[RMDB]
RNA sequence: GGGAACGACUCGAGUAGAGUCGAAAAAUCGAUACGAGCGCACGCCCGUUCGGCUUCUCGCGCAGGAAGAGCCAUGCGAACAGCGCGACGACGGCGGGAAUCGUGCUCGUGAUGACGCCCGCCGCGAAUCACCAUGAUCCUUCGGGAUCAUGGUGAUAAAAGAAACAACAACAACAAC
Reactivity to 2A3 in 0.01 (KOAc 150mM, MgCl2 10mM, bicine 150mM(pH8.5), 24C), signal-to-noise 2, nucleotides 027 to 126: a030u070c020g010a060u050a070c000g010a000g040c010g000c050a010c100g060c000c010c030g000u200u300c030g060g000c120u160u080c030u040c020g000c000g020c040a040g140g140a230a090g070a030g050c070c120a080u230g000c050g030a100a010c000a030g000c000g000c000g010a030c070g000a000c000g010g010c020g010g000g000a050a060u150c130g000u020g000c000u000c000g010u000g010a020u050g000a010c010g040c010c020c000g050c090c070g060c070g100a080
Reactivity to DMS in 0.01 (KOAc 150mM, MgCl2 10mM, bicine 150mM(pH8.5), 24C), signal-to-noise 2, nucleotides 027 to 126: a070u010c020g020a180u000a010c000g010a040g000c000g040c070a090c300g020c010c000c010g010u000u000c000g040g010c060u000u000c110u000c010g020c010g000c030a110g000g010a050a060g000a190g000c010c140a140u010g020c000g000a180a200c040a080g020c030g030c000g010a030c140g020a050c020g000g000c000g000g000g000a040a100u000c180g000u000g010c000u000c020g010u000g030a040u000g000a040c160g000c000c010c000g040c170c040g000c040g000a140